[RMDB]
RNA sequence: GGGAACGACUCGAGUAGAGUCGAAAACUAAUUUAUCCACUCCGAUUGCGGCAAAGUUGGUGACGAAAAGUACGUUAACUGGGAAGAACUUUCAUCUACAUGACGUUUGACGUUAUUACUUGCGAUGUUGGCCAAGAUCACAGAGUAGAGAAUGUCACGUAUUAGUAAUCUUCGGAUUACUAAUACGAAAAGAAACAACAACAACAAC
Reactivity to 2A3 in 0.01 (KOAc 150mM, MgCl2 10mM, bicine 150mM(pH8.5), 24C), signal-to-noise 8, nucleotides 027 to 156: c020u050a050a130u060u100u170a150u030c020c000a030c030u020c020c020g080a070u010u080g020c020g000g000c010a060a030a050g040u090u080g030g020u020g000a010c010g040a030a050a030a070g090u090a020c020g010u020u030a150a060c040u050g000g020g040a040a060g030a080a050c040u060u190u110c080a120u020c030u090a100c020a060u070g020a010c010g020u030u050u130g050a010c010g010u000u060a050u080u070a060c050u040u050g040c030g080a050u070g060u160u080g060g000c000c010a030a010g020a020u020c010a020c050a060g020a010g020u070a010g030a000g020a060a050u100g060u120c050a010
Reactivity to DMS in 0.01 (KOAc 150mM, MgCl2 10mM, bicine 150mM(pH8.5), 24C), signal-to-noise 5, nucleotides 027 to 156: c050u020a090a090u010u000u000a110u010c020c020a080c020u010c020c050g010a120u000u000g020c300g020g020c040a070a050a130g020u010u000g020g020u000g010a150c060g010a080a100a060a140g020u000a050c050g010u000u000a060a130c070u010g020g000g020a130a130g000a060a090c070u000u000u010c030a090u000c040u020a100c090a140u000g030a050c050g020u000u000u010g010a120c040g020u000u000a060u000u000a040c030u000u010g030c040g010a110u000g020u010u010g020g040c040c030a070a250g000a060u000c020a070c040a060g010a050g020u000a040g000a120g010a080a070u000g010u000c060a130